This 177-nucleotide RNA was probed chemically with DMS and 2A3. 2A3 adducts were read by reverse transcription with SuperScript II with manganese. For DMS, 1,233 sequencing reads were counted. The 2A3 profile rests on 1,695 reads. The RNA was probed in 150 mM KOAc, 10 mM MgCl2 and 150 mM bicine (pH 8.5) at 24 C.
[RMDB]
RNA sequence: GGGAACGACUCGAGUAGAGUCGAAAAUCGAAAAUACGACAGAGCCCUGCAAUACCGGUCCAUAGACCCGUCCAUGAUGCUGAGCAACAAGGCACAGGUGGACUUGAUGCUCCAAAAUGAGAUCGGAGUGGUAAUGGGGAUUCGUCCCCAUUACCACAAAAGAAACAACAACAACAAC
Reactivity to DMS in 0.01 (KOAc 150mM, MgCl2 10mM, bicine 150mM(pH8.5), 24C), signal-to-noise 2, nucleotides 027 to 126: u000c100g010a070a100a100a110u000a080c080g020a060c060a100g000a180g010c040c020c020u010g000c070a050a150u000a080c040c000g010g000u000c040c030a090u020a100g000a090c080c020c050g000u000c040c020a040u000g010a250u010g020c220u010g000a050g010c030a010a120c060a040a060g010g000c100a040c030a120g000g070u020g000g020a010c020u000u000g010a050u010g020c020u000c020c060a000a040a120a020u010g000a130g010a020u000c060g030g000a110
Reactivity to 2A3 in 0.01 (KOAc 150mM, MgCl2 10mM, bicine 150mM(pH8.5), 24C), signal-to-noise 1, nucleotides 027 to 126: u030c000g040a020a050a030a060u220a080c010g010a000c090a090g110a050g080c010c040c000u040g060c030a080a030u070a160c000c030g010g040u000c000c000a020u030a090g060a100c020c010c000g020u000c010c000a010u120g050a050u060g080c100u040g010a010g040c030a010a030c020a040a030g030g010c020a000c010a120g060g200u080g030g030a020c000u000u040g010a040u070g030c030u000c040c000a070a080a000a030u070g020a140g020a110u080c030g000g050a050